[RMDB]
Structure probing data (DMS and 2A3) for a 207-nucleotide construct. 2A3 adducts were read by reverse transcription with SuperScript II with manganese. Reactivities are given for positions 27 through 156. Reactivities are rounded to 0.1 and cut off at 0 and 3. Source: RMDB library M2RFOK, as collected in RNAgym.
RNA sequence: GGGAACGACUCGAGUAGAGUCGAAAAAUCAGAGGGCGCUAUCAUGCAAACUAGGAUUGUCUGCUCAUGCACAGAACCAACAACCGAUAACUAACAGUGCAUGAAGGUUAGUUAUUCCAUAUUAAUUAAAACUCGUAAUUCUUCGGAAUUACGAGAAGACUAACUAGUAGUUCGCUACUAGUUAGUCAAAAGAAACAACAACAACAAC
Reactivity to DMS in 0.01 (KOAc 150mM, MgCl2 10mM, bicine 150mM(pH8.5), 24C), signal-to-noise 4, nucleotides 027 to 156: a100u000c050a090g000a080g010g000g030c160g020c030u000a060u010c070a080u000g010c030a090a180a140c080u000a090g010g010a110u000u000g000u010c040u000g000c020u000c050a070u010g020c030a050c030a090g000a050a120c050c020a070a080c080a080a190c050c050g010a060u000a020a070c040u010a030a040c040a080g030u000g030c030a030u000g010a070a130g020g030u000u000a020g010u000u010a030u000u000c050c020a080u010a100u000u000a050a190u000u000a060a050a110a140c000u000c010g020u010a000a010u000u000c010u000u010c300g070g010a030a010u000u000a000c000g010a000g030a010a050
Reactivity to 2A3 in 0.01 (KOAc 150mM, MgCl2 10mM, bicine 150mM(pH8.5), 24C), signal-to-noise 9, nucleotides 027 to 156: a000u040c030a020g020a040g050g030g000c030g000c040u080a130u300c090a070u270g010c020a020a020a030c020u030a030g050g010a060u030u040g030u050c040u060g030c010u000c010a000u010g000c000a000c000a030g050a140a090c070c020a060a100c040a050a070c060c090g030a020u010a010a000c000u010a000a000c010a040g020u010g040c010a000u010g010a020a020g080g000u010u000a000g000u010u010a020u100u050c020c010a040u110a080u250u220a170a090u120u150a070a090a060a080c000u000c000g000u000a000a000u000u000c000u010u030c090g070g000a000a000u000u000a000c000g000a000g000a000a000